[RMDB]
RNA sequence: GGGAACGACUCGAGUAGAGUCGAAAACCAGGACCCCCUUCCAAAUUAACCGAGGGGGGAGCUUAGAACGCAGAGGACCAGCGGAGCCGUGGGAUGCUCCCUCCCGAUUCCGCCCAAACCCGUUCCCGUCUCUAAUGAAGUUCGCUUCAUUAGAGACAAAAGAAACAACAACAACAAC
Reactivity to 2A3 in 0.01 (KOAc 150mM, MgCl2 10mM, bicine 150mM(pH8.5), 24C), signal-to-noise 1, nucleotides 027 to 126: c010c020a010g020g200a040c000c000c000c000c050u010u000c000c010a070a160a220u100u030a080a130c050c030g010a060g020g020g000g000g000g010a000g010c000u070u140a060g030a140a030c060g060c070a020g030a070g220g000a070c060c050a060g040c010g000g000a000g050c000c050g060u170g050g030g000a030u110g000c010u050c080c020c000u040c000c020c030g000a020u040u000c000c000g030c000c000c020a060a090a030c060c010c000g000u000u000c000c000c000
Reactivity to DMS in 0.01 (KOAc 150mM, MgCl2 10mM, bicine 150mM(pH8.5), 24C), signal-to-noise 2, nucleotides 027 to 126: c020c000a130g000g010a240c010c020c010c010c010u000u030c020c070a030a120a210u020u020a060a100c190c260g000a030g040g010g000g010g010g000a010g030c010u000u030a130g010a130a080c100g020c080a040g010a140g010g010a090c020c140a060g010c030g010g010a090g020c030c020g000u000g000g010g020a080u000g000c070u000c020c010c020u020c010c000c010g000a130u000u000c050c030g000c020c010c050a040a090a070c020c050c000g000u000u000c010c020c000

An RNA of 177 nucleotides, treated with 2A3 and DMS and read out base by base. It was measured as part of the RMDB library VIROID. The 2A3 profile rests on 1,346 reads. As a SHAPE reagent, 2A3 marks flexible, mostly unpaired nucleotides at the ribose 2'-OH. Reactivities are rounded to 0.1 and cut off at 0 and 3.